The record gives the reactivity of an RNA of 177 nucleotides to 2A3.

RNA sequence: GGGAACGACUCGAGUAGAGUCGAAAAGAAAAGAGCGUAAUCGCGUCUUGACGUGAGUGAGACUAGACUGUAGUCUAUCCCAAGUGGGAUAGUAUAUCUCACAAUACGCUGAUCUACAGUCAAAAGAAGUGACUGGCGAGUUCGCUCGCCAGUCACUAAAAGAAACAACAACAACAAC
Reactivity to 2A3 in 0.01 (KOAc 150mM, MgCl2 10mM, bicine 150mM(pH8.5), 24C), signal-to-noise 1, nucleotides 027 to 126: g120a000a060a000a010g060a000g000c000g000u020a020a000u010c010g000c000g000u000c030u290u300g050a000c000g000u000g000a000g010u050g000a000g000a000c030u020a030g000a000c000u000g000u050a000g010u060c000u000a000u000c000c000c010a140a170g300u300g040g000g000a000u000a000g000u000a000u000a000u010c000u050c000a000c000a060a000u060a030c020g010c000u000g010a020u100c000u000a000c000a000g020u000c050a000a000a000a120g150a090
Conditions: 150 mM KOAc, 10 mM MgCl2 and 150 mM bicine (pH 8.5), 24 C. It was measured as part of the RMDB library OK1LIB.